[RMDB]
RNA sequence: GGGAACGACUCGAGUAGAGUCGAAAAGAAGGCCCAGAUGGAGUUAUUGGGAGGAAGUUUGACGAUCCCGUGUCAAACGGUAUAUAUACGUUCCGGCCUGCUCCUGCAGAGGAGGCUUCUGCUGUGGCACGUCGCUACAGUUCGCUGUAGCGACGUGAAAAGAAACAACAACAACAAC
Reactivity to DMS in 0.01 (KOAc 150mM, MgCl2 10mM, bicine 150mM(pH8.5), 24C), signal-to-noise 1, nucleotides 027 to 126: g010a160a120g030g000c030c000c020a070g000a140u000g000g000a030g010u010u010a100u010u010g010g000g020a300g000g000a070a130g010u000u000u000g020a020c020g010a060u010c020c000c020g000u000g020u000c030a020a030a000c010g000g010u000a060u000a060u010a110u010a070c040g030u010u010c010c040g010g010c040c010u010g000c010u010c010c020u010g010c280a150g010a030g000g020a050g010g010c020u000u010c010u000g000c020u000g000u010g010g000